[RMDB]
RNA sequence: GGGAACGACUCGAGUAGAGUCGAAAAGAUAUGGAUCGGCCAGACAUGUUCCGCACUCGGAAACGAGUGACGGAACAACAGCUGGAUCGAUCCUAAGUCAAAACCAAUCAUGUUCGCAUGAUUGGAACGUAUUAUCAGAGUUCGCUCUGAUAAUACGAAAAGAAACAACAACAACAAC
Reactivity to DMS in 0.01 (KOAc 150mM, MgCl2 10mM, bicine 150mM(pH8.5), 24C), signal-to-noise 7, nucleotides 027 to 126: g000a010u000a110u020g000g000a010u000c000g000g000c000c000a010g010a020c050a300u010g020u000u000c000c000g010c000a010c000u000c000g010g000a020a020a070c010g010a020g010u010g010a090c000g010g000a000a010c000a050a030c240a140g000c000u000g000g000a090u010c000g010a010u000c000c000u000a000a070g010u000c000a100a090a120a200c000c000a010a010u000c000a010u000g010u000u010c280g030c010a000u000g010a020u000u000g000g000a030a080
Reactivity to 2A3 in 0.01 (KOAc 150mM, MgCl2 10mM, bicine 150mM(pH8.5), 24C), signal-to-noise 9, nucleotides 027 to 126: g000a010u010a010u070g000g000a000u000c010g020g010c030c000a000g020a050c120a290u300g010u000u000c000c010g000c000a000c000u000c000g010g020a070a020a010c000g000a000g040u020g020a020c010g000g000a000a000c000a000a000c040a010g020c010u010g000g030a150u120c000g000a000u000c000c000u000a010a000g010u000c010a010a030a100a180c010c000a000a000u010c010a010u010g090u110u120c300g020c190a000u010g000a000u000u010g000g000a030a040

The record gives the reactivity of an RNA of 177 nucleotides to DMS and 2A3.
Conditions: 150 mM KOAc, 10 mM MgCl2 and 150 mM bicine (pH 8.5), 24 C.
Source: RMDB library TTRDES, as collected in RNAgym.